[RMDB]
RNA sequence: GGGAACGACUCGAGUAGAGUCGAAAAAGCGUCGACGAACCUUCCAACCUUCCAAAGCAGCAAAAGCUGUACCUUCCAACCUUCCAAUCUACUCGAGAGGAGGAGGAGGAGGAGGAGGAGGAAUUAAACGUAGCAGUAAUUUCGAUUACUGCUACGUAAAAGAAACAACAACAACAAC
Reactivity to DMS in 0.01 (KOAc 150mM, MgCl2 10mM, bicine 150mM(pH8.5), 24C), signal-to-noise 2, nucleotides 027 to 126: a020g050c050g060u020c050g010a050c130g030a050a130c080c040u050u000c020c020a090a130c070c020u010u000c020c010a080a090a130g020c010a030g010c040a110a080a060a110g020c010u000g020u000a070c080c030u010u020c020c020a030a090c070c030u000u020c010c080a080a120u000c010u000a020c080u000c010g020a020g000a290g000g000a050g020g010a200g000g000a080g000g030a110g000g010a140g030g000a210g000g000a120g000g000a290a120u020u010a040a030
Reactivity to 2A3 in 0.01 (KOAc 150mM, MgCl2 10mM, bicine 150mM(pH8.5), 24C), signal-to-noise 3, nucleotides 027 to 126: a000g070c040g040u030c000g030a080c030g020a050a110c000c010u030u040c000c030a150a120c020c010u060u000c030c010a060a110a040g010c000a000g000c000a000a180a260a150g000c010u020g020u030a060c000c000u070u020c010c020a090a080c000c040u080u000c010c010a020a070u010c010u060a100c050u060c080g040a030g010a020g040g000a030g010g010a050g020g040a030g000g000a070g030g070a030g000g060a030g010g040a030g030g040a030a010u160u120a120a170

The record gives the reactivity of an RNA of 177 nucleotides to DMS and 2A3. For 2A3 the reverse transcriptase was SuperScript II with manganese. The RNA was probed in 150 mM KOAc, 10 mM MgCl2 and 150 mM bicine (pH 8.5) at 24 C. It was measured as part of the RMDB library M2PK90. For DMS, 1,687 sequencing reads were counted.